Overview
The data come from the RNA Mapping Database (RMDB), library OK2TRN. This 177-nucleotide RNA was probed chemically with 2A3 and DMS. The RNA was probed in 150 mM KOAc, 10 mM MgCl2 and 150 mM bicine (pH 8.5) at 24 C. For 2A3, 1,110 sequencing reads were counted.
[RMDB]
RNA sequence: GGGAACGACUCGAGUAGAGUCGAAAACAGACUCAUCAACACAGCAGCAAAACCAAACAAUGCCGUCAGCACCCACAGCGGCCAGUUGCCGGUACGUGCGUAUGGUGUGAGUCCGGUGGUCGGCGUCACGGAGGUAGGUAUUCGUACCUACCUCCGUAAAAGAAACAACAACAACAAC
Reactivity to 2A3 in 0.01 (KOAc 150mM, MgCl2 10mM, bicine 150mM(pH8.5), 24C), signal-to-noise 1, nucleotides 027 to 126: c020a010g030a030c010u020c070a040u060c000a010a110c100a020c000a060g000c000a000g010c060a030a070a070a140c020c020a010a050a060c020a040a150u170g000c000c020g020u070c040a000g000c000a000c010c010c020a110c040a070g130c140g090g000c040c000a050g000u120u090g040c030c010g000g070u060a060c070g110u060g120c030g060u140a100u150g040g030u050g030u040g020a020g000u010c000c070g050g020u000g000g040u010c000g010g040c050g050u040c060
Reactivity to DMS in 0.01 (KOAc 150mM, MgCl2 10mM, bicine 150mM(pH8.5), 24C), signal-to-noise 2, nucleotides 027 to 126: c070a100g020a100c020u040c020a050u010c050a100a120c060a080c070a050g000c090a070g010c050a020a090a070a100c090c070a090a060a070c100a020a090u000g010c020c020g020u000c030a070g000c040a120c020c030c010a060c090a210g000c080g010g000c020c040a070g010u000u000g040c040c000g000g010u010a030c140g020u010g000c070g000u000a050u010g010g000u000g040u000g010a080g000u010c020c040g000g020u010g010g000u010c030g020g030c030g020u010c070